About this RNA
Chemical mapping of a 177-nucleotide RNA with DMS and 2A3.
RNA sequence: GGGAACGACUCGAGUAGAGUCGAAAAGAGAAUGAGCGAGUUAACGAGGCACUGAUUCAGGUGCUAGCCUAUCAUAAUGAGCAUAUUGGCUUUGCCUCUUAUUAUAAUGAUUUCGUGUUAACCAAAGACUUCCCCAUAGAUUCGUCUAUGGGGAAGUAAAAGAAACAACAACAACAAC
Reactivity to DMS in 0.01 (KOAc 150mM, MgCl2 10mM, bicine 150mM(pH8.5), 24C), signal-to-noise 6, nucleotides 027 to 126: g010a140g000a080a100u000g000a160g010c080g010a100g010u000u010a040a080c170g010a060g010g020c010a030c050u000g000a110u000u000c090a040g030g020u000g000c030u000a040g010c080c080u000a070u010c180a050u000a100a100u020g000a030g000c100a050u010a080u020u000g010g000c010u000u000u010g000c060c010u000c000u000u010a040u010u000a090u010a100a080u010g000a090u010u010u000c050g010u000g000u000u000a040a150c030c050a060a070a140g000
Reactivity to 2A3 in 0.01 (KOAc 150mM, MgCl2 10mM, bicine 150mM(pH8.5), 24C), signal-to-noise 4, nucleotides 027 to 126: g100a000g040a030a140u180g030a040g060c050g020a050g070u030u040a050a040c070g000a050g010g000c020a000c030u040g010a210u210u160c060a040g040g020u010g020c010u020a010g020c000c010u130a130u200c040a060u100a300a100u140g040a000g020c050a010u100a220u180u080g050g010c010u030u030u040g000c020c000u010c020u070u070a100u100u110a090u090a120a140u100g070a040u060u120u050c030g000u050g050u100u100a040a050c010c010a070a000a050g060